RNA sequence: GGGAACGACUCGAGUAGAGUCGAAAAUACGACAGAUCGUUGCGCGGAUACACGAACGGCUGGCCGAUGCUGUACUUGUACGCCAUCGCGACGAGCGUCGGCAGCUUCGCGAUCAUGCGGAUCGCCAGCACUACGACCGGUUCGCCGGUCGUAGUGCAAAAGAAACAACAACAACAAC
Reactivity to DMS in 0.01 (KOAc 150mM, MgCl2 10mM, bicine 150mM(pH8.5), 24C), signal-to-noise 1, nucleotides 027 to 126: u000a110c040g010a090c010a130g020a100u000c010g000u010u020g050c040g020c300g010g000a210u000a030c010a010c020g020a050a030c180g010g000c020u000g020g030c090c110g010a060u010g000c000u040g000u000a100c060u030u000g050u000a040c050g000c020c060a140u000c050g000c010g000a030c050g000a040g030c060g000u000c010g010g020c060a050g000c010u000u000c070g030c040g030a020u000c000a050u000g010c080g040g000a040u010c010g000c050c140a110
Reactivity to 2A3 in 0.01 (KOAc 150mM, MgCl2 10mM, bicine 150mM(pH8.5), 24C), signal-to-noise 2, nucleotides 027 to 126: u130a010c030g020a010c050a060g160a120u100c030g100u090u080g040c020g000c000g040g010a020u040a100c060a000c040g000a130a000c070g050g000c010u060g260g000c060c020g030a010u060g000c030u050g010u180a120c000u050u080g080u040a110c100g000c010c040a150u180c090g030c040g010a000c020g040a000g040c020g010u030c000g000g000c010a030g000c010u080u060c040g020c020g000a010u040c040a140u190g150c010g140g040a020u000c000g050c030c000a020
This 177-nucleotide RNA was probed chemically with DMS and 2A3.
For 2A3, 1,215 sequencing reads were counted.
2A3 adducts were read by reverse transcription with SuperScript II with manganese.
The reactions ran in a buffer of 150 mM KOAc, 10 mM MgCl2 and 150 mM bicine (pH 8.5), at 24 C.